[RMDB]
RNA sequence: GGGAACGACUCGAGUAGAGUCGAAAAUUGCAACAAUGAAAAAGGUGAAUUUUACUUAGAAUGUUAUGAUAUAAGAGAUACACCGACCUUCAUAACCAUCACAGCUAAAUUUCUUCAUAUUUUAGUCUGCUUCCUCUUAUUUCGAUAAGAGGAAGCAAAAAGAAACAACAACAACAAC
Reactivity to DMS in 0.01 (KOAc 150mM, MgCl2 10mM, bicine 150mM(pH8.5), 24C), signal-to-noise 2, nucleotides 027 to 126: u000u030g000c160a150a100c170a080a070u030g010a020a050a030a110a200g000g000u000g000a040a010u010u000u020u020a080c030u000u000a010g010a140a130u000g020u070u020a040u050g000a080u000a060u050a030a040g000a080g020a040u000a060c030a000c000c020g000a120c270c140u000u000c060a020u010a030a020c060c040a110u020c080a040c110a100g030c000u030a000a000a020u030u000u020c080u000u010c090a040u020a040u030u000u000u000a030g000u000c090
Reactivity to 2A3 in 0.01 (KOAc 150mM, MgCl2 10mM, bicine 150mM(pH8.5), 24C), signal-to-noise 4, nucleotides 027 to 126: u090u110g020c010a050a050c030a120a130u120g050a020a000a010a040a010g090g010u050g070a040a030u070u040u060u050a130c020u010u000a060g060a070a070u110g090u210u230a070u140g080a040u020a010u010a170a030g020a000g000a010u060a060c040a010c020c020g030a040c000c000u010u060c020a040u070a090a090c020c000a070u170c120a080c040a050g000c040u040a020a030a030u100u090u010c080u090u100c060a110u060a260u180u050u030u030a050g060u060c030
The data come from the RNA Mapping Database (RMDB), library OK1LIB. Chemical mapping of a 177-nucleotide RNA with DMS and 2A3. For DMS, 2,499 sequencing reads were counted.